[RMDB]
RNA sequence: GGGAACGACUCGAGUAGAGUCGAAAAGAUAUGGAUCCAUCGCUAGCUUAAUUAUCGGAAACGAUAGAUAAGCUUGGACCGAGUGGAUCCUAAGUCAAACAGACACAGGCUUCGGCCUGUGUCUGAACAACUCUUACUACUUCGGUAGUAAGAGUUGAAAAGAAACAACAACAACAAC
Reactivity to DMS in 0.01 (KOAc 150mM, MgCl2 10mM, bicine 150mM(pH8.5), 24C), signal-to-noise 6, nucleotides 027 to 126: g010a030u000a120u010g000g000a010u000c000c000a020u000c010g010c000u000a010g020c000u000u000a010a080u000u000a000u000c000g010g000a030a040a070c000g010a000u000a000g010a090u000a000a020g010c000u010u010g010g010a050c300c010g000a040g030u000g000g000a010u000c000c000u000a010a080g000u000c020a080a150a300c010a000g000a000c000a000c010a000g000g000c000u000u010c240g030g010c000c000u000g010u000g000u000c000u000g000a060a140
Reactivity to 2A3 in 0.01 (KOAc 150mM, MgCl2 10mM, bicine 150mM(pH8.5), 24C), signal-to-noise 4, nucleotides 027 to 126: g010a000u040a010u060g000g010a010u010c000c000a000u000c000g000c020u020a030g000c010u020u030a070a050u130u020a160u020c010g020g000a050a030a020c000g000a000u000a000g060a030u040a020a000g010c000u030u300g030g010a030c040c040g020a120g240u110g000g000a000u000c010c000u010a050a010g030u000c040a130a030a130c000a000g000a000c000a000c000a000g040g080c040u180u300c300g100g000c030c000u030g000u000g000u010c000u000g010a000a000